The data come from the RNA Mapping Database (RMDB), library OK1LIB. This 177-nucleotide RNA was probed chemically with 2A3 and DMS. For DMS, 17,200 sequencing reads were counted. For 2A3 the reverse transcriptase was SuperScript II with manganese.

[RMDB]
RNA sequence: GGGAACGACUCGAGUAGAGUCGAAAAGAAAAUAAGAGCGUAAUCGCGUCUUGACGUGAGUGAGCCCACACGAAAAGCUAUCCCAAGUGGGAUAGCAUAGCUAACAAUACGCUAAGAUUCGUGUGAACACUAAUGCUCAUUUCGAUGAGCAUUAGUGAAAAGAAACAACAACAACAAC
Reactivity to 2A3 in 0.01 (KOAc 150mM, MgCl2 10mM, bicine 150mM(pH8.5), 24C), signal-to-noise 9, nucleotides 027 to 126: g020a000a050a010a030u200a030a020g050a020g020c020g040u080a070a060u040c010g000c010g030u020c090u120u180g100a020c010g010u020g000a040g020u050g020a030g010c000c010c000a000c000a000c000g000a000a020a010a010g000c000u000a000u030c010c000c020a210a190g210u300g100g000g000a000u000a000g000c000a000u000a000g000c010u050a070a080c070a180a120u150a120c110g000c010u020a030a020g100a200u000u040c010g000u000g000u000g040a060a010
Reactivity to DMS in 0.01 (KOAc 150mM, MgCl2 10mM, bicine 150mM(pH8.5), 24C), signal-to-noise 7, nucleotides 027 to 126: g010a070a060a050a050u030a060a050g000a090g020c020g000u010a150a140u010c020g010c010g010u010c040u040u000g010a050c020g000u000g010a040g010u000g010a190g000c000c040c000a010c000a000c000g000a010a020a120a120g000c000u000a000u000c000c000c000a300a170g020u060g010g000g000a000u000a000g010c000a050u000a010g000c000u020a210a110c280a140a140u030a080c200g010c000u000a040a080g000a130u000u010c000g000u000g010u000g010a100a170